The record gives the reactivity of an RNA of 207 nucleotides to 2A3. It was measured as part of the RMDB library RNAMAK. Reactivities are rounded to 0.1 and cut off at 0 and 3. 2A3 adducts were read by reverse transcription with SuperScript II with manganese. The reactions ran in a buffer of 150 mM KOAc, 10 mM MgCl2 and 150 mM bicine (pH 8.5), at 24 C.
[RMDB]
RNA sequence: GGGAACGACUCGAGUAGAGUCGAAAAGGCUGGUUCGCCAGCCGAUUGGAUAUGGACUCGGUGUCUUUUGACGUACGUAGAGACCGAAUCGGAAACGAUUCGGUGUAGUACGAUAAGACACGCGAGUCCUAAGUCGUCUGGACACGUUCGCGUGUAAGGCGUACAAUGGAUUCGUCCAUUGUACGCCAAAAGAAACAACAACAACAAC
Reactivity to 2A3 in 0.01 (KOAc 150mM, MgCl2 10mM, bicine 150mM(pH8.5), 24C), signal-to-noise 1, nucleotides 027 to 156: g010g020c000u000g000g080u030u030c300g080c080c000a000g000c000c000g000a030u050u180g110g050a040u030a070u230g000g000a010c000u000c000g040g000u000g090u040c020u010u170u160u180g170a020c000g000u000a010c030g130u270a000g080a010g100a210c000c000g010a000a000u000c000g000g070a000a000a280c020g000a000u000u000c030g000g000u000g000u000a000g000u000a000c000g000a000u010a080a020g000a000c000a000c000g160c000g050a000g000u000c000c000u000a000a000g020u000c000g050u040c130u200g080g020a030c000a000c030g030u190u200c210g100c200g130u150g000u130a050a120